The record gives the reactivity of an RNA of 177 nucleotides to DMS. DMS adducts were read by reverse transcription with MarathonRT. Values cover nucleotides 27 to 126. The data come from the RNA Mapping Database (RMDB), libraries RFM100 and RFMREP.
[RMDB]
RNA sequence: GGGAACGACUCGAGUAGAGUCGAAAAGUAUAUGCUUGUCAGUGCAUGCACGUGUAUGUCUGGGAGUACAAAUGGGUGCGACUGGUUGUAGGGAACUAGCUAUGUGCCUUCUAUUAGGCCAUGACAGAAACGUGCAUUCCUUCGGGAAUGCACGUUUAAAAGAAACAACAACAACAAC
Reactivity to DMS in 0.01 (KOAc 150mM, MgCl2 10mM, bicine 150mM(pH8.5), 24C), signal-to-noise 1, nucleotides 027 to 126: g020u000a060u010a100u000g030c060u000u000g090u000c050a010g010u000g030c070a010u020g010c040a150c140g020u000g000u030a050u010g010u000c020u000g000g000g000a090g010u000a070c180a050a040a130u040g050g010g000u000g010c010g010a130c060u000g020g090u000u000g030u010a090g000g030g000a050a060c040u000a080g000c100u000a010u010g020u040g010c030c010u000u000c300u000a130u020u000a030g000g000c010c010a020u010g010a060c050a060g050